[RMDB]
An RNA of 207 nucleotides, treated with 2A3 and DMS and read out base by base. Values cover nucleotides 27 to 156. It was measured as part of the RMDB library M2RFPK.
RNA sequence: GGGAACGACUCGAGUAGAGUCGAAAAAUGGCGAAUGCAUGGGGAACUACAUCUGUGUCGCGAGUUCGAUUCUCGCCAGGGCCUGGUCCUGUAGCUCAGUUGGUAGAGCAAGCUGUUCCCCGGACCCAAAAUCCAGCUAGGUUCGCCUAGCUGGAAACCCAUAGAUUUAGUUCGCUAAAUCUAUGGGAAAAGAAACAACAACAACAAC
Reactivity to 2A3 in 0.01 (KOAc 150mM, MgCl2 10mM, bicine 150mM(pH8.5), 24C), signal-to-noise 8, nucleotides 027 to 156: a000u100g080g010c050g100a130a030u200g040c080a080u100g010g000g000g010a020a010c020u090a040c110a130u100c020u040g050u040g060u180c010g000c000g000a000g000u000u010c000g000a000u010u000c000u000c000g000c000c000a000g010g010g000c050c270u190g080g060u020c000c000u010g000u010a010g000c000u000c010a050g020u190u140g140g130u190a010g000a000g000c000a010a000g010c040u020g010u010u000c000c000c000c000g000g010a010c000c000c000a030a100a000a030u010c000c000a000g000c000u000a000g000g000u010u010c030g040c040c000u000a000g000c000u000g000g000a010a000a000
Reactivity to DMS in 0.01 (KOAc 150mM, MgCl2 10mM, bicine 150mM(pH8.5), 24C), signal-to-noise 6, nucleotides 027 to 156: a080u000g010g010c050g010a130a060u000g020c040a120u000g020g010g030g010a050a070c010u000a070c050a050u010c070u010g050u010g040u000c020g010c010g000a040g000u000u010c040g000a300u000u000c010u000c000g000c030c020a080g020g020g010c030c120u010g050g010u010c020c010u000g000u000a050g010c010u000c010a120g010u000u000g030g010u000a060g010a050g020c020a200a190g000c070u010g010u000u000c010c010c000c010g020g000a090c010c000c010a030a050a100a110u000c010c000a010g000c000u000a020g000g010u000u000c270g030c010c000u000a010g010c000u000g000g000a000a010a070